The record gives the reactivity of an RNA of 177 nucleotides to DMS and 2A3. High 2A3 reactivity points to a flexible backbone, as in loops and unpaired stretches. Conditions: 150 mM KOAc, 10 mM MgCl2 and 150 mM bicine (pH 8.5), 24 C.
[RMDB]
RNA sequence: GGGAACGACUCGAGUAGAGUCGAAAAAAAGGUGAGCCGGUCACCUGGCAGGGGCGACAGUAUCAGCCGUAUCCCAUUCAGGGGAGCGGUUUUGAACUGAAUGGCAAAGGCACCAGUACGCGCCCCACCCCCUCUAAGAUUUCGAUCUUAGAGGGGGAAAAGAAACAACAACAACAAC
Reactivity to DMS in 0.01 (KOAc 150mM, MgCl2 10mM, bicine 150mM(pH8.5), 24C), signal-to-noise 2, nucleotides 027 to 126: a040a080a070g000g000u000g010a100g040c070c130g040g000u000c040a010c000c010u000g010g000c200a090g030g030g020g010c010g010a300c040a020g040u000a150u000c060a030g000c000c000g010u010a120u000c060c000c000a190u010u000c270a100g050g000g010g000a020g000c000g000g000u010u000u000u000g000a120a040c010u000g000a090a120u020g010g030c100a080a110a060g010g030c090a130c030c030a080g010u000a110c100g010c060g010c000c010c010c000a180
Reactivity to 2A3 in 0.01 (KOAc 150mM, MgCl2 10mM, bicine 150mM(pH8.5), 24C), signal-to-noise 2, nucleotides 027 to 126: a010a000a000g030g000u010g010a010g100c140c030g090g140u020c010a020c000c010u030g090g010c060a090g000g050g000g000c020g000a020c010a030g000u030a120u190c010a010g010c000c040g010u030a300u060c010c020c000a010u120u190c110a050g020g000g110g010a000g010c000g020g040u050u050u170u130g000a020a000c000u010g040a090a050u030g000g000c070a050a150a130g120g000c030a040c020c000a020g030u090a050c050g000c000g030c040c010c010c010a040